[RMDB]
RNA sequence: GGGAACGACUCGAGUAGAGUCGAAAACCGCACUUCUUCGGAAGUGCGGAAAUACCGAGAUUGUACCUCGGUAGAAGUACAUAAGCCUUGGAAACAAGGGAAAAAGCGUGAGCUUCGGCUCACGCAAGCUACUAAUGUACUUCGGUACAUUAGUAGCAAAAGAAACAACAACAACAAC
Reactivity to DMS in 0.01 (KOAc 150mM, MgCl2 10mM, bicine 150mM(pH8.5), 24C), signal-to-noise 4, nucleotides 027 to 126: c000c000g010c000a000c000u000u000c000u010u000c190g030g010a000a000g010u010g000c000g000g010a000a030a110u010a060c000c000g000a020g000a090u010u000g010u000a240c080c010u000c000g000g010u000a010g010a060a110g010u000a070c150a060u010a080a110g000c000c000u000u010g010g000a160a120a190c000a010a010g000g000g000a030a050a070a120a080g010c000g040u000g010a010g010c000u000u010c240g030g010c000u000c000a000c000g000c010a000a030
Reactivity to 2A3 in 0.01 (KOAc 150mM, MgCl2 10mM, bicine 150mM(pH8.5), 24C), signal-to-noise 4, nucleotides 027 to 126: c000c010g010c000a000c010u000u010c000u030u050c080g100g010a010a000g000u000g020c000g000g000a020a010a000u030a010c000c010g000a000g010a040u140u230g040u170a090c020c000u000c000g010g010u010a020g020a070a030g060u130a060c030a130u160a100a120g070c000c000u000u000g000g000a010a050a000c000a010a010g040g010g040a040a140a010a030a000g000c000g000u000g000a000g010c010u040u110c270g090g000c000u000c000a000c000g010c000a010a000